Source information
An RNA of 177 nucleotides, treated with DMS and 2A3 and read out base by base. 2A3 adducts were read by reverse transcription with SuperScript II with manganese.
RNA sequence: GGGAACGACUCGAGUAGAGUCGAAAAGAAAACUGUGAAAACUGCUUUUUCUGUUUAUAGUUGGUUUAUAGAGGAAGUAUUAGGAAACUGGGGCACAACAAUAAUACGUGUUCCACAACUUUCAGCGCUAUUCAUUUCAGUUCGCUGAAAUGAAUAGAAAAGAAACAACAACAACAAC
Reactivity to DMS in 0.01 (KOAc 150mM, MgCl2 10mM, bicine 150mM(pH8.5), 24C), signal-to-noise 2, nucleotides 027 to 126: g010a110a080a070a100c050u010g000u000g000a130a060a130a060c100u000g000c060u000u000u000u000u000c030u020g000u010u000u000a050u000a150g020u010u000g010g000u010u000u010a030u010a050g000a070g000g010a000a020g000u000a040u020u030a070g000g010a070a050a090c240u000g000g000g000g010c000a010c010a060a130c190a110a120u010a080a120u000a050c110g000u000g000u000u000c000c000a020c080a050a090c090u010u000u010c050a070g010c200g000
Reactivity to 2A3 in 0.01 (KOAc 150mM, MgCl2 10mM, bicine 150mM(pH8.5), 24C), signal-to-noise 1, nucleotides 027 to 126: g010a010a140a010a000c120u070g010u080g150a140a090a000a030c080u000g000c000u000u030u010u010u000c000u000g090u020u090u030a110u050a140g110u090u170g080g000u040u070u070a070u000a000g020a000g080g000a030a030g000u000a010u160u120a040g050g040a050a080a070c060u080g000g000g050g000c030a000c000a000a190c020a160a180u170a200a040u140a080c100g000u000g000u010u000c000c000a010c020a010a020c010u020u110u020c040a010g020c000g050